Source: RMDB library OK2TST, as collected in RNAgym. The record gives the reactivity of an RNA of 177 nucleotides to 2A3 and DMS. The RNA was probed in 150 mM KOAc, 10 mM MgCl2 and 150 mM bicine (pH 8.5) at 24 C. As a SHAPE reagent, 2A3 marks flexible, mostly unpaired nucleotides at the ribose 2'-OH. Values cover nucleotides 27 to 126. For 2A3 the reverse transcriptase was SuperScript II with manganese. DMS adducts were read by reverse transcription with MarathonRT.
RNA sequence: GGGAACGACUCGAGUAGAGUCGAAAAAUAUAACAGGAUGCUACUCUUGCAACUUUGGAUCUCGUGUGUGCUUGAAAAUCAAAUCAAGCGGAAAUGGAGAGUUCUGGGCAAGGUCUGAAGAUGCCUCAUAUUCCUAAGAGUUCGCUCUUAGGAAUAUAAAAGAAACAACAACAACAAC
Reactivity to 2A3 in 0.01 (KOAc 150mM, MgCl2 10mM, bicine 150mM(pH8.5), 24C), signal-to-noise 5, nucleotides 027 to 126: a000u230a010u050a080a070c030a040g060g040a040u070g040c040u030a070c040u040c000u090u070g020c030a040a150c050u110u120u110g020g020a020u000c020u010c040g050u090g010u020g010u040g060c000u000u000g030a070a090a100a130u200c050a010a090a100u010c010a010a010g000c090g030g020a120a160a050u140g060g010a060g000a030g100u080u020c050u070g000g030g000c010a030a030g010g010u000c040u020g020a040a030g040a050u090g030c000c000u060c030
Reactivity to DMS in 0.01 (KOAc 150mM, MgCl2 10mM, bicine 150mM(pH8.5), 24C), signal-to-noise 6, nucleotides 027 to 126: a090u010a080u020a110a120c070a070g010g010a070u000g010c050u000a060c090u010c040u000u000g010c060a060a090c060u000u000u010g010g010a050u010c010u000c040g030u010g000u000g010u000g000c000u000u000g000a020a050a080a130u010c300a070a130a120u000c010a010a010g010c000g010g000a040a070a060u000g010g010a070g000a110g010u000u000c040u000g020g020g010c030a040a040g010g010u000c050u000g000a070a060g010a100u010g010c020c110u000c150